[RMDB]
RNA sequence: GGGAACGACUCGAGUAGAGUCGAAAAGAUAUGGAUCCGAAACAGCGCCAUGGCGUUUGACGACACUAGCGUCGGAAACGACGCUAGUGUCCGAGCCAUGGACCCGCUGUAGUAGGAUCCUAAGUCACGCUUAAUAGCAGUUCGCUGCUAUUAAGCGAAAAGAAACAACAACAACAAC
Reactivity to DMS in 0.01 (KOAc 150mM, MgCl2 10mM, bicine 150mM(pH8.5), 24C), signal-to-noise 2, nucleotides 027 to 126: g020a040u000a300u000g010g020a010u000c000c010g010a240a230a200c000a000g000c010g010c030c000a020u010g000g000c000g000u000u000u020g000a260c300g020a010c020a000c000u000a000g020c000g090u010c000g020g000a080a130a190c000g010a030c000g010c000u040a000g010u000g000u000c000c010g000a080g010c000c000a020u010g010g010a070c160c300c120g010c020u010g010u000a040g000u000a170g000g000a010u000c000c000u000a030a050g020u000c060a140